[RMDB]
Structure probing data (DMS) for a 177-nucleotide construct.
The RNA was probed in 150 mM KOAc, 10 mM MgCl2 and 150 mM bicine (pH 8.5) at 24 C.
DMS adducts were read by reverse transcription with MarathonRT.
The data come from the RNA Mapping Database (RMDB), library TTRDEL.
RNA sequence: GGGAACGACUCGAGUAGAGUCGAAAAGAUAUGGACGCUAGAGGGAGCUACGUCGGAAACGACUAGCGACGAUCUCUACGCGUCCUAAGUCAAAAGCACUACAUGUGGUUCGCCACAUGUAGUGCAACGGAAGAAACCAGUUCGCUGGUUUCUUCCGAAAAGAAACAACAACAACAAC
Reactivity to DMS in 0.01 (KOAc 150mM, MgCl2 10mM, bicine 150mM(pH8.5), 24C), signal-to-noise 1, nucleotides 027 to 126: g030a060u030a300u000g010g000a000c000g000c000u030a010g010a010g000g000g000a040g000c000u000a000c300g000u000c000g040g020a130a110a220c000g000a020c000u020a010g030c000g000a020c190g000a020u000c000u010c020u000a020c210g010c010g000u030c010c000u010a010a070g010u010c040a150a070a100a190g010c000a000c000u000a010c000a000u020g030u000g000g010u000u020c240g000c040c010a000c000a020u000g020u000a000g030u000g010c000a000a020